Chemical mapping of a 207-nucleotide RNA with 2A3 and DMS.
RNA sequence: GGGAACGACUCGAGUAGAGUCGAAAAUUACUGUUGGGCACUUGGGCCACUGGCUGUGAGAGUGACAUCCUGCUGAGCCCUAUGGAGAGACAGGAGAGUGCCCAGCAGAGGAAGGAGACAGCGGAAGAGGGACACGAGCCAGGCAGUCCCCACUCUGCAAUUGAUCACUGUUCGCAGUGAUCAAUUGAAAAGAAACAACAACAACAAC
Reactivity to 2A3 in 0.01 (KOAc 150mM, MgCl2 10mM, bicine 150mM(pH8.5), 24C), signal-to-noise 3, nucleotides 027 to 156: u160u050a060c020u000g020u030u000g000g010g000c010a010c020u030u060g020g010g010c010c020a020c030u010g010g030c010u030g030u050g110a130g020a030g160u100g090a020c010a040u020c000c010u050g040c110u030g050a050g050c000c020c020u060a110u140g060g000a100g020a010g020a050c040a040g050g040a040g000a000g020u010g000c000c000c000a000g000c000a000g010a030g030g040a040a050g040g020a020g010a000c070a060g010c010g020g040a070a020g030a120g020g020g020a010c020a020c120g040a020g030c030c010a020g010g040c010a020g030u040c020c010c000c010a020c010u020c010u020g020
Reactivity to DMS in 0.01 (KOAc 150mM, MgCl2 10mM, bicine 150mM(pH8.5), 24C), signal-to-noise 2, nucleotides 027 to 156: u000u000a090c020u010g030u000u010g010g000g010c030a010c030u000u000g000g090g020c010c000a050c010u000g020g000c040u010g040u010g020a110g010a140g010u000g020a080c020a300u000c020c010u000g040c030u000g000a300g000c060c000c120u000a250u000g010g010a030g010a300g010a060c020a080g030g020a150g020a090g040u000g000c020c020c010a040g000c000a020g030a100g030g000a080a080g020g000a160g000a060c040a130g050c090g000g010a120a080g000a140g000g000g000a060c040a070c070g010a160g030c020c010a110g040g010c060a160g030u000c000c010c000c010a060c010u000c000u000g000
The reactions ran in a buffer of 150 mM KOAc, 10 mM MgCl2 and 150 mM bicine (pH 8.5), at 24 C. The 2A3 profile rests on 3,568 reads. Values cover nucleotides 27 to 156. DMS adducts were read by reverse transcription with MarathonRT. The DMS profile rests on 3,078 reads.